The record gives the reactivity of an RNA of 207 nucleotides to 2A3.
Values cover nucleotides 27 to 156.
For 2A3 the reverse transcriptase was SuperScript II with manganese.
It was measured as part of the RMDB library ARCHII.
The reactions ran in a buffer of 150 mM KOAc, 10 mM MgCl2 and 150 mM bicine (pH 8.5), at 24 C.

[RMDB]
RNA sequence: GGGAACGACUCGAGUAGAGUCGAAAAGAGGCUCGAGGUGCAUGUCGAGAAUGAGAGAAUCUCGUUAAAUACUUUCAAAACUUAUAGUUGCAAACGACGACAACUACGCUUUAGCGGCUUAAUUCCCGCUUUCGCUUACCUAGAUUUGUCUGUGGGUGUGAUUCAAUGUGUUCGCACAUUGAAUCACAAAAGAAACAACAACAACAAC
Reactivity to 2A3 in 0.01 (KOAc 150mM, MgCl2 10mM, bicine 150mM(pH8.5), 24C), signal-to-noise 2, nucleotides 027 to 156: g100a040g040g000c020u040c050g000a030g030g020u070g020c050a040u070g060u170c040g020a000g000a030a040u030g000a010g000a010g000a000a070u010c000u000c030g050u010u000a020a050a010u110a230c010u010u060u060c030a090a120a040a030c050u140u100a020u040a250g010u040u010g010c020a130a110a000c050g060a000c000g000a010c020a010a010c030u080a040c060g010c000u060u040u030a000g030c030g020g020c020u050u060a040a030u200u200c000c000c000g000c000u040u020u000c020g000c030u020u050a070c000c040u010a020g030a200u060u010u100g070u000c070u080g060u090g050g020g030u050